[RMDB]
RNA sequence: GGGAACGACUCGAGUAGAGUCGAAAAGCUUGCCACCCAAGGAAGUUAUGUAGUUAAUUGUAAUACCAAAAAACCAAACCUGGAUGCAGAGUUGGAUCAAUUAUUACAGGGUCAUUAUAUAAAAGGAGUCUUGAUAACGAUUCGUCGUUAUCAAGACAAAAGAAACAACAACAACAAC
Reactivity to DMS in 0.01 (KOAc 150mM, MgCl2 10mM, bicine 150mM(pH8.5), 24C), signal-to-noise 2, nucleotides 027 to 126: g000c080u000u000g020c060c040a110c020c010c010a140a060g000g040a090a150g010u000u000a040u020g040u000a000g020u000u020a100a100u000u000g010u010a070a040u010a130c200c110a000a040a100a120a130a100c040c000a000a060a020c020c020u000g000g010a140u020g000c000a040g000a110g000u010u010g010g000a060u010c080a070a120u020u000a010u000u010a040c000a000g000g000g000u010c080a040u020u000a020u010a050u000a060a020a100a130g010g010a200